[RMDB]
RNA sequence: GGGAACGACUCGAGUAGAGUCGAAAAGCUACAUUGCAUGAUAUAUCUGUUAUGGAAGGAAUGUUUGCUGUACAACAUUUGCAUACACAUUUGAAUCAUUUGAAGACAAUGCUUCUAGAAAGAAGAAGCUACAUAGCUGGUUCGCCAGCUAUGUAGCAAAAGAAACAACAACAACAAC
Reactivity to DMS in 0.01 (KOAc 150mM, MgCl2 10mM, bicine 150mM(pH8.5), 24C), signal-to-noise 2, nucleotides 027 to 126: g030c010u000a040c070a070u030u000g000c050a000u000g020a050u010a100u020a050u000c050u000g020u000u020a040u000g010g030a140a080g010g000a060a030u000g010u010u000u000g010c080u010g010u000a190c050a040a020c010a010u000u000u000g000c000a060u000a070c140a050c050a050u000u000u000g000a070a060u020c020a090u000u010u000g010a180a090g010a110c160a080a010u000g010c010u000u000c010u000a090g000a010a120a220g000a050a060g000a080a090
Reactivity to 2A3 in 0.01 (KOAc 150mM, MgCl2 10mM, bicine 150mM(pH8.5), 24C), signal-to-noise 2, nucleotides 027 to 126: g030c020u020a000c010a050u020u130g070c020a060u070g010a020u040a020u000a030u070c020u010g060u120u020a020u030g000g120a060a110g090g090a110a030u040g000u020u070u050g070c080u190g120u220a080c030a060a010c000a090u030u070u070g110c010a010u030a050c070a000c010a090u040u030u120g080a040a010u080c000a040u030u030u150g080a130a010g030a020c010a040a020u080g000c000u020u020c020u020a140g130a140a180a000g050a030a020g000a000a000
This 177-nucleotide RNA was probed chemically with DMS and 2A3. Reactivities are given for positions 27 through 126. The DMS profile rests on 994 reads. The data come from the RNA Mapping Database (RMDB), library OK2TRN. DMS adducts were read by reverse transcription with MarathonRT. The 2A3 profile rests on 1,058 reads. Conditions: 150 mM KOAc, 10 mM MgCl2 and 150 mM bicine (pH 8.5), 24 C. 2A3 adducts were read by reverse transcription with SuperScript II with manganese.